[RMDB]
RNA sequence: GGGAACGACUCGAGUAGAGUCGAAAAAUAGUCCUAACGGCGAGGGUGUGCUUAGUAGUUCAGGCGUAUAGUGCCGUAACACCCGAAGCCGGUUCGUUCGGCGGGUACCUACGCGCGCAAUGGCGAGGGGCUUGCGGCGGGGCGUUCUAACUGACCGAGGAUGUAGAGAAUUCGUUCUCUACAUCCUAAAAGAAACAACAACAACAAC
Reactivity to DMS in 0.01 (KOAc 150mM, MgCl2 10mM, bicine 150mM(pH8.5), 24C), signal-to-noise 2, nucleotides 027 to 156: a100u010a050g020u020c020c010u000a050a080c030g040g050c020g000a300g000g000g020u000g010u010g020c100u000u000a150g010u000a110g010u000u010c040a200g010g040c020g010u000a160u000a120g010u010g000c010c010g000u000a090a040c020a050c010c010c000g060a100a270g010c010c020g000g020u010u000c060g020u000u000c020g000g010c030g030g020g020u000a060c010c010u000a120c040g000c020g010c050g030c040a140a130u010g040g020c020g000a200g010g000g030g020c020u010u000g010c040g010g010c020g000g010g000g050c040g000u000u000c030u010a100a100c020u020g000a150c070c050g020
Reactivity to 2A3 in 0.01 (KOAc 150mM, MgCl2 10mM, bicine 150mM(pH8.5), 24C), signal-to-noise 2, nucleotides 027 to 156: a010u100a000g030u020c020c020u030a150a020c000g030g010c020g000a070g020g000g000u010g000u020g050c080u120u080a070g000u080a030g040u230u160c060a110g060g000c010g060u090a150u120a170g150u150g020c000c020g000u040a010a000c000a010c020c000c010g000a000a000g000c000c000g000g000u030u020c040g020u030u030c020g010g040c000g000g080g010u150a210c000c000u120a130c060g050c000g000c000g030c050a080a160u190g070g020c020g020a040g010g050g030g000c000u000u020g010c040g000g000c010g020g010g000g000c010g030u010u100c020u070a100a100c080u130g050a110c030c050g000
An RNA of 207 nucleotides, treated with DMS and 2A3 and read out base by base. The data come from the RNA Mapping Database (RMDB), library OK3TST. The RNA was probed in 150 mM KOAc, 10 mM MgCl2 and 150 mM bicine (pH 8.5) at 24 C. For DMS the reverse transcriptase was MarathonRT. For 2A3, 1,143 sequencing reads were counted.